[RMDB]
RNA sequence: GGGAACGACUCGAGUAGAGUCGAAAAGAAUUGGUAUCUGAGCUACAACUUCCGGUAGCUGGGACUGUGAUAAAUUCACAGUAUACUGAGCCGAAGCUCAGCUUCGGUCCGUAAUCGGAAGAAGAAACCCUACUAUUUAGUUCGCUAAAUAGUAGGGAAAAGAAACAACAACAACAAC
Reactivity to 2A3 in 0.01 (KOAc 150mM, MgCl2 10mM, bicine 150mM(pH8.5), 24C), signal-to-noise 9, nucleotides 027 to 126: g090a020a090u070u060g030g010u060a040u080c040u200g170a000g000c000u000a010c000a110a070c010u000u000c000c000g000g010u000a000g010c000u000g010g010g010a010c000u000g010u000g020a020u060a270a230a130u110u020c000a000c000a000g010u010a030u050a010c010u020g010a000g010c000c000g000a000a000g000c040u080c300a050g000c010u010u000c000g000g000u000c010c000g080u100a080a090u120c000g000g000a000a000g020a010a010g110a040a070a030
Reactivity to DMS in 0.01 (KOAc 150mM, MgCl2 10mM, bicine 150mM(pH8.5), 24C), signal-to-noise 7, nucleotides 027 to 126: g000a080a080u000u000g010g010u000a080u010c010u000g000a020g000c000u010a010c010a080a090c010u000u010c000c010g000g000u000a010g010c000u000g000g010g010a080c010u000g000u000g010a020u020a080a100a150u050u000c000a010c000a010g000u010a060u020a010c010u000g000a030g000c000c000g000a010a010g010c000u070c200a140g010c000u000u000c000g000g000u000c000c000g000u030a080a060u020c010g000g000a020a000g010a220a170g000a120a100a110
Annotation
Source: RMDB library OK1LIB, as collected in RNAgym. This 177-nucleotide RNA was probed chemically with 2A3 and DMS. The RNA was probed in 150 mM KOAc, 10 mM MgCl2 and 150 mM bicine (pH 8.5) at 24 C. 2A3 adducts were read by reverse transcription with SuperScript II with manganese.